[RMDB]
RNA sequence: GGGAACGACUCGAGUAGAGUCGAAAAGCUGUGUAUCGCAGGGCUCGAUCAGUGGGAGUUGGCUCAGGUCGAUUGCUCUAUUGGUUUGGUCUGUGACCUGGUUGCUCGCUGAGAGUAAAACCAAUGGCUAAAUAUUUAAUUUCGAUUAAAUAUUUAGAAAAGAAACAACAACAACAAC
Reactivity to 2A3 in 0.01 (KOAc 150mM, MgCl2 10mM, bicine 150mM(pH8.5), 24C), signal-to-noise 5, nucleotides 027 to 126: g030c020u030g010u020g040u100a050u090c040g000c060a020g000g030g020c010u020c030g060a090u030c010a020g030u050g020g050g010a060g020u040u000g030g000c010u030c070a040g050g020u010c010g030a060u020u130g050c010u000c010u070a070u020u040g050g030u060u030u090g030g010u010c050u050g170u120g040a060c000c010u010g060g010u090u080g030c010u010c030g000c080u120g030a020g000a000g050u060a020a100a010a000c010c000a020a070u070g040g000
Reactivity to DMS in 0.01 (KOAc 150mM, MgCl2 10mM, bicine 150mM(pH8.5), 24C), signal-to-noise 4, nucleotides 027 to 126: g010c010u010g020u000g010u010a030u000c030g020c210a050g000g000g020c010u000c100g000a070u010c040a030g020u010g010g000g010a050g010u000u000g010g000c020u010c090a060g010g020u000c020g020a080u020u010g000c040u010c050u020a050u020u010g010g000u000u020u010g020g000u010c040u030g010u030g010a060c050c040u010g000g000u010u010g010c010u000c020g000c170u030g010a170g000a050g010u000a030a040a060a030c010c010a030a060u010g000g010